[RMDB]
RNA sequence: GGGAACGACUCGAGUAGAGUCGAAAAACCUUGAUAGAUGGAAUGAGGGGGUAACGCCCUGAAACGUCUUCCCUGAUACUCCGAUUGGCGCUGCAAGACAGCACUUGCAGGGUCAAGAGCUCGGUGAGCUGACGGAAAGAUUCGUCUUUCCGUCAGCAAAAGAAACAACAACAACAAC
Reactivity to 2A3 in 0.01 (KOAc 150mM, MgCl2 10mM, bicine 150mM(pH8.5), 24C), signal-to-noise 2, nucleotides 027 to 126: a010c000c000u000u060g090a060u140a050g020a000u060g040g030a150a290u040g000a050g020g000g030g010g000u030a000a050c050g150c000c000c000u000g000a000a040a030c000g000u000c000u030u070c040c060c000u040g040a070u100a270c000u020c030c000g070a090u010u010g030g000c250g000c110u010g000c000a020a020g040a070c120a210g090c170a090c040u010u030g000c000a010g060g000g000u000c000a000a000g010a010g070c050u000c030g060g000u030g060a010
Reactivity to DMS in 0.01 (KOAc 150mM, MgCl2 10mM, bicine 150mM(pH8.5), 24C), signal-to-noise 2, nucleotides 027 to 126: a040c050c040u050u030g030a190u060a030g000a020u000g020g000a030a120u000g010a300g000g000g010g040g000u000a140a150c300g000c000c010c020u000g000a090a010a020c000g000u000c000u000u020c000c050c020u000g000a120u020a060c110u070c000c060g000a160u010u000g000g040c000g040c000u000g000c000a030a000g010a190c140a110g000c120a110c050u000u000g020c000a010g000g000g030u000c030a000a060g000a080g000c300u030c010g000g000u000g000a170